[RMDB]
RNA sequence: GGGAACGACUCGAGUAGAGUCGAAAAAUGCCUUUCUUCUAUUAUUCAGAUACACCUUGUGUGUAUAUGGAAGGCAUGGAAUCUAAGCAGGUAGAUUAUGUCCCAUUAAGGAGCGCUACAUGCAUUAAUUAUCUUAUGCUUUCGAGCAUAAGAUAAUAAAAGAAACAACAACAACAAC
Reactivity to 2A3 in 0.01 (KOAc 150mM, MgCl2 10mM, bicine 150mM(pH8.5), 24C), signal-to-noise 9, nucleotides 027 to 126: a000u010g000c000c010u020u010u010c030u100u020c040u030a200u300u060a200u180u300c080a030g010a090u000a010c000a010c010c080u270u240g070u080g000u000g010u300a030u000a010u090g000g010a000a000g000g000c000a000u000g010g060a050a040u060c080u120a100a020g020c030a020g070g090u040a010g010a070u070u080a050u290g080u040c010c010c010a000u110u090a070a060g070g000a060g040c050g000c060u040a020c010a050u050g030c000a020u090u160a100
Reactivity to DMS in 0.01 (KOAc 150mM, MgCl2 10mM, bicine 150mM(pH8.5), 24C), signal-to-noise 9, nucleotides 027 to 126: a020u000g000c000c000u000u000u000c000u000u000c070u000a120u010u010a150u010u010c180a060g010a080u000a010c000a000c000c020u010u000g020u010g020u000g010u000a010u000a050u010g010g000a010a010g010g010c000a000u000g000g010a090a080u000c040u000a090a130g010c040a030g010g020u000a020g000a080u000u000a100u010g010u000c000c000c010a170u010u020a120a110g000g000a060g020c100g010c050u000a020c040a040u000g010c020a150u010u000a070